Structure probing data (DMS and 2A3) for a 177-nucleotide construct. Source: RMDB libraries RFM100 and RFMREP, as collected in RNAgym.

RNA sequence: GGGAACGACUCGAGUAGAGUCGAAAAUGACGCCCGGGUCCUGCGCAACAGGAACCCACGAAUCCUGUCAGGUCCGGAAGGAAGCAGCAGUAAGUGGUUAUUCUUGUGUGCCGCAGGGAAGCCUAGGGUUUCUCGAGCAAUUCGUUGCUCGAGAAACAAAAGAAACAACAACAACAAC
Reactivity to DMS in 0.01 (KOAc 150mM, MgCl2 10mM, bicine 150mM(pH8.5), 24C), signal-to-noise 2, nucleotides 027 to 126: u030g000a190c180g010c000c000c000g000g000g050u000c000c000u030g110c000g030c020a020a000c000a000g000g010a000a000c300c000c000a000c000g010a130a280u020c300c000u000g040u000c000a300g000g010u000c000c000g000g140a150a260g010g000a050a000g000c000a290g000c000a030g000u020a090a300g020u000g000g010u000u060a300u000u020c000u000u000g000u000g020u010g030c090c110g020c010a000g000g000g000a030a090g000c020c000u000a080g150g000
Reactivity to 2A3 in 0.01 (KOAc 150mM, MgCl2 10mM, bicine 150mM(pH8.5), 24C), signal-to-noise 2, nucleotides 027 to 126: u150g040a030c070g020c000c000c000g000g030g000u210c000c000u000g000c000g000c020a000a020c000a010g000g010a000a010c020c000c000a000c010g030a020a050u150c020c010u000g060u110c000a020g000g010u000c010c000g070g070a060a020g040g000a010a000g000c000a000g000c010a020g000u040a130a030g000u010g000g020u020u100a030u030u030c000u030u050g000u110g120u080g030c020c110g010c010a000g010g000g000a070a000g000c030c000u080a150g000g040
Annotation
2A3 adducts were read by reverse transcription with SuperScript II with manganese.